Chemical mapping of a 177-nucleotide RNA with DMS and 2A3. The reactions ran in a buffer of 150 mM KOAc, 10 mM MgCl2 and 150 mM bicine (pH 8.5), at 24 C. It was measured as part of the RMDB library OK2TST. For 2A3 the reverse transcriptase was SuperScript II with manganese. As a SHAPE reagent, 2A3 marks flexible, mostly unpaired nucleotides at the ribose 2'-OH.
RNA sequence: GGGAACGACUCGAGUAGAGUCGAAAAGGACGUCCUCUUCAUGCUCAUCUUGCUCGUGUUUGGGCUGUCGAACGGGUACGUGUCGAGCUUGUGCAUGAUGUCUGCGGGCUCGUUGGAGCAUAAUCGGAUACAGACGAGAUUUCGAUCUCGUCUGUAUAAAAGAAACAACAACAACAAC
Reactivity to DMS in 0.01 (KOAc 150mM, MgCl2 10mM, bicine 150mM(pH8.5), 24C), signal-to-noise 4, nucleotides 027 to 126: g010g020a100c150g010u000c010c020u000c060u000u010c040a030u000g010c010u000c020a030u000c040u000u000g010c010u010c020g010u000g010u000u000u000g000g000g010c050u010g010u000c120g010a140a050c040g000g010g010u000a020c050g010u000g010u020c040g010a030g000c100u000u000g020u000g010c010a040u010g010a060u000g010u010c100u000g010c060g010g000g010c010u000c030g010u020u010g000g010a070g010c040a080u000a090a120u010c060g010g000
Reactivity to 2A3 in 0.01 (KOAc 150mM, MgCl2 10mM, bicine 150mM(pH8.5), 24C), signal-to-noise 2, nucleotides 027 to 126: g080g000a060c040g070u030c000c000u010c000u060u040c000a020u030g010c000u000c000a070u000c030u020u050g000c000u000c020g060u040g050u020u050u110g060g040g020c060u050g190u150c090g020a060a010c020g060g000g000u080a020c000g010u020g170u150c020g000a000g000c000u060u040g040u020g030c010a040u050g010a040u060g080u080c020u070g070c070g040g040g000c020u000c020g070u050u180g090g000a050g000c020a020u090a080a140u210c070g030g000

The 2A3 profile rests on 2,403 reads.